[RMDB]
RNA sequence: GGGAACGACUCGAGUAGAGUCGAAAAGAUAUGGACGUUCAUGGUGACAUGCUUGUACACUCGGAAACGAGUGGUAGAGCAACAGCACCAUGAGACGUCCUAAGUCAAACAAGCCUUCGGGCUUGAAGUUAUUAUUAACGUUCGCGUUAAUAAUAACAAAAGAAACAACAACAACAAC
Reactivity to 2A3 in 0.01 (KOAc 150mM, MgCl2 10mM, bicine 150mM(pH8.5), 24C), signal-to-noise 9, nucleotides 027 to 126: g030a020u090a050u180g000g010a000c000g000u010u010c010a000u010g000g010u010g060a190c040a150u070g030c000u130u110g300u300a030c000a000c000u010c000g020g030a050a110a060c010g010a010g010u010g000g020u070a020g000a000g020c010a020a020c050a020g070c000a000c000c000a000u000g000a000g000a000c000g000u000c000c000u000a000a010g000u000c010a060a030a110c000a020a000g000c010c000u110u190c300g130g000g000c020u000u010g010a030a000
Reactivity to DMS in 0.01 (KOAc 150mM, MgCl2 10mM, bicine 150mM(pH8.5), 24C), signal-to-noise 9, nucleotides 027 to 126: g000a050u000a300u010g010g010a010c000g030u000u000c000a000u000g000g010u000g010a050c090a300u000g010c010u000u000g010u020a300c000a030c000u000c000g010g000a080a130a240c010g000a010g010u000g010g000u020a300g000a010g010c000a020a060c280a170g000c010a010c000c000a010u000g000a070g010a020c000g010u000c000c000u000a010a090g010u000c040a110a130a300c010a010a010g010c000c000u000u010c180g030g010g010c000u000u010g000a080a140
An RNA of 177 nucleotides, treated with 2A3 and DMS and read out base by base. DMS adducts were read by reverse transcription with MarathonRT. The RNA was probed in 150 mM KOAc, 10 mM MgCl2 and 150 mM bicine (pH 8.5) at 24 C. For 2A3 the reverse transcriptase was SuperScript II with manganese. The 2A3 profile rests on 48,214 reads. The data come from the RNA Mapping Database (RMDB), library TTRDES. Reactivities are rounded to 0.1 and cut off at 0 and 3. The DMS profile rests on 20,689 reads.